[RMDB]
RNA sequence: GGGAACGACUCGAGUAGAGUCGAAAAUCGAAUAUAAUUACAAGAUAGAGAAAUGUGAAGGAGAGGAGCAAUCAAAUAUCUUCAGCUAGAAAUGCCCCUAGAGUUGGAGACAGAAAAUCUAAGGAGGCAUGUGGACUACUUUCGAGUAGUCCACAUGAAAAGAAACAACAACAACAAC
Reactivity to DMS in 0.01 (KOAc 150mM, MgCl2 10mM, bicine 150mM(pH8.5), 24C), signal-to-noise 1, nucleotides 027 to 126: u000c050g000a180a170u000a140u010a140a130u020u030a080c040a070a160g000a080u010a080g010a110g000a050a060a130u010g000u020g000a030a050g000g000a090g000a050g020g000a110g050c030a070a050u010c090a050a070a100u000a090u000c020u000u000c020a040g000c060u010a030g010a100a040a070u010g010c050c010c010c030u000a090g000a060g060u000u000g020g000a040g000a060c110a120g030a090a050a060a040u000c080u030a090a100g000g000a060g000g040